[RMDB]
RNA sequence: GGGAACGACUCGAGUAGAGUCGAAAAUGUUAAUUUUACAAUACGUUCAAGACCUAAAUGCUAGGAACGACAUCUAUAUAAUGCCCUCGUUACAAGAAAUUGUAAAGUUACUGACUGAUGAUAUAGACGCUCAUAGGCAGUUCGCUGCCUAUGAGCGAAAAGAAACAACAACAACAAC
Reactivity to 2A3 in 0.01 (KOAc 150mM, MgCl2 10mM, bicine 150mM(pH8.5), 24C), signal-to-noise 1, nucleotides 027 to 126: u150g030u050u000a050a000u020u000u050u050a000c000a000a000u000a100c000g000u000u020c030a280a270g050a260c000c000u200a300a000a000u180g020c010u000a000g050g030a020a000c000g000a000c000a050u010c020u130a000u000a000u000a210a030u300g060c030c030c020u080c020g080u040u030a000c080a010a070g000a050a270a170u000u050g000u000a000a000a000g130u000u100a030c110u030g100a020c100u230g000a000u080g070a000u050a000u110a300g150a000